[RMDB]
RNA sequence: GGGAACGACUCGAGUAGAGUCGAAAAUCGUCGUCUCAACCGGGAUUGAUCACGAUUGGUUCCACUCUGUCAAUCGUAGUUAUCUAAAAUAGUGAUUGCCCCACAGCAACGUGGCUGGACGGUAAAUUUGACGGUUUCAAUUCGUUGAAACCGUCAAAAAAGAAACAACAACAACAAC
Reactivity to 2A3 in 0.01 (KOAc 150mM, MgCl2 10mM, bicine 150mM(pH8.5), 24C), signal-to-noise 3, nucleotides 027 to 126: u090c000g030u010c010g000u010c000u010c070a050a080c050c040g120g000g000a060u080u120g080a020u050c010a000c050g000a030u020u050g060g010u160u030c040c000a060c030u010c010u050g030u030c010a040a050u050c020g030u040a060g060u100u050a010u110c020u050a020a050a120a140u100a040g030u010g020a090u000u120g040c000c000c000c000a040c010a000g030c030a050a160c200g020u050g100g000c030u030g000g000a040c050g000g020u040a060a080a110u000
Reactivity to DMS in 0.01 (KOAc 150mM, MgCl2 10mM, bicine 150mM(pH8.5), 24C), signal-to-noise 2, nucleotides 027 to 126: u010c050g020u000c040g000u010c020u000c020a080a110c130c070g000g020g000a010u000u040g020a030u000c070a000c050g000a020u000u010g000g030u000u010c010c020a030c050u000c060u020g020u000c000a010a060u010c190g010u000a060g020u000u000a090u000c030u000a040a060a090a080u040a100g010u000g000a050u000u000g030c020c000c060c110a200c090a030g000c090a120a100c180g000u000g040g010c010u030g000g000a060c100g000g000u010a040a070a060u010

Structure probing data (2A3 and DMS) for a 177-nucleotide construct. For 2A3, 1,136 sequencing reads were counted. Reactivities are given for positions 27 through 126. DMS adducts were read by reverse transcription with MarathonRT.